[RMDB]
RNA sequence: GGGAACGACUCGAGUAGAGUCGAAAACAGAGUGCCUCUCGUGUGCAUUGUUGUAUUUGAAUCUUAUGACAACGCUCCAAGUUGGUGUCAUCCCUCCUUUGCAGCUGAGAAAACCGGGGCUCAGAGGGGUUAGACCACUUGCCUGAGGUCACACAGACUCAUUUAUACCAUUCGUGGUAUAAAUGAGAAAAGAAACAACAACAACAAC
Reactivity to 2A3 in 0.01 (KOAc 150mM, MgCl2 10mM, bicine 150mM(pH8.5), 24C), signal-to-noise 7, nucleotides 027 to 156: c040a020g060a010g050u040g020c010c000u040c020u050c070g080u060g020u040g050c040a040u020u020g010u010u010g040u040a130u060u130u220g210a200a130u090c090u060u070a040u090g020a010c000a050a020c070g020c010u000c010c000a020a010g030u120u130g140g020u070g080u030c010a020u020c000c010c000u030c020c050u060u100u230g010c070a070g030c000u030g040a030g140a160a130a020a010c080c030g110g010g030g010c010u000c020a000g000a000g020g000g000g010u000u010a010g010a020c000c000a000c010u010u010g050c010c050u060g010a020g020g070u100c020a010c000a000c000a020g070a070
Reactivity to DMS in 0.01 (KOAc 150mM, MgCl2 10mM, bicine 150mM(pH8.5), 24C), signal-to-noise 3, nucleotides 027 to 156: c060a140g010a170g050u000g020c020c010u000c010u000c050g020u000g030u010g010c010a110u010u000g010u000u010g020u000a060u000u000u000g020a080a270u010c150u000u000a040u000g000a040c000a050a060c070g010c020u000c070c010a040a150g010u000u000g060g000u000g000u000c110a040u010c020c010c000u000c010c050u010u000u000g020c070a070g000c020u000g020a230g020a120a060a090a150c100c050g040g020g030g020c040u000c080a060g000a050g000g000g030g010u010u000a060g010a060c020c010a030c040u010u000g010c080c030u000g000a050g020g000u000c030a010c040a080c060a080g010a250